RNA sequence: GGGAACGACUCGAGUAGAGUCGAAAAUAGGUGGAGUGGCGGGCAGAGCAUCCAGCAGAUUGCAAGUCCACGUGUACAGGUGGCGAAGCAGCUCCCUUUCCCUGACAUGCUGGCCCGUCCGCAAAUACGUGUUCUACCAGUUCGCUGGUAGAACACGAAAAGAAACAACAACAACAAC
Reactivity to 2A3 in 0.01 (KOAc 150mM, MgCl2 10mM, bicine 150mM(pH8.5), 24C), signal-to-noise 1, nucleotides 027 to 126: u200a020g180g010u070g070g090a080g030u120g070g010c040g000g030g000c030a010g040a030g190c000a020u070c030c020a040g030c010a020g010a170u100u150g000c020a000a050g070u030c010c010a010c020g150u110g040u090a210c130a080g000g200u000g020g000c020g030a070a020g000c080a030g000c040u080c020c030c000u000u100u010c010c000c000u010g040a030c000a070u080g010c000u010g020g000c020c000c050g000u000c020c010g000c020a050a090a030u180a030
Reactivity to DMS in 0.01 (KOAc 150mM, MgCl2 10mM, bicine 150mM(pH8.5), 24C), signal-to-noise 2, nucleotides 027 to 126: u020a080g040g040u000g000g000a140g000u010g000g020c000g000g000g080c000a080g010a070g010c070a050u020c060c080a050g020c030a020g000a160u010u000g050c020a040a180g000u010c000c000a020c010g020u000g020u010a150c280a140g000g010u000g000g000c050g000a260a150g000c030a040g000c060u000c020c030c020u000u000u000c010c020c000u050g000a090c190a050u000g000c000u000g020g000c070c000c060g010u000c020c020g000c110a000a020a070u000a100